This 177-nucleotide RNA was probed chemically with DMS and 2A3. For 2A3 the reverse transcriptase was SuperScript II with manganese. DMS adducts were read by reverse transcription with MarathonRT. It was measured as part of the RMDB library OK1LIB. The reactions ran in a buffer of 150 mM KOAc, 10 mM MgCl2 and 150 mM bicine (pH 8.5), at 24 C.
RNA sequence: GGGAACGACUCGAGUAGAGUCGAAAAUUCUGGAUGUGUUGUGUAGGCAAAGAGGGCGUCAGCGGGUGCGUGUGUGUGGGUCGACGUCAUGCUUGCUGAAAAAAGAAUAGAAAGGACGUAUGCAGCGGAGUCCGGUAUUAUUCGUAAUACCGGACUCAAAAGAAACAACAACAACAAC
Reactivity to DMS in 0.01 (KOAc 150mM, MgCl2 10mM, bicine 150mM(pH8.5), 24C), signal-to-noise 3, nucleotides 027 to 126: u000u000c010u010g020g010a110u010g030u010g000u000u040g020u000g020u010a040g020g020c100a070a040a110g010a140g000g000g020c030g010u010c060a110g000c020g000g000g000u000g000c070g030u050g010u000g000u000g030u050g000g020g010u000c050g000a080c040g000u040c030a030u050g030c070u000u030g000c040u040g000a000a060a100a100a060a040g020a060a070u030a110g010a090a080a080g010g010a040c050g010u000a070u000g010c030a040g000c150g000
Reactivity to 2A3 in 0.01 (KOAc 150mM, MgCl2 10mM, bicine 150mM(pH8.5), 24C), signal-to-noise 2, nucleotides 027 to 126: u030u010c020u050g130g010a120u040g060u000g020u140u000g070u040g020u040a030g000g010c050a110a010a070g040a100g020g000g000c000g040u000c020a030g020c020g010g000g080u110g020c060g020u040g040u020g000u000g010u080g030g010g040u020c010g000a000c000g010u020c010a010u220g080c000u030u030g000c020u060g060a080a000a000a060a000a070g090a090a020u120a040g080a120a100a010g020g000a000c010g000u030a020u170g000c030a020g070c070g110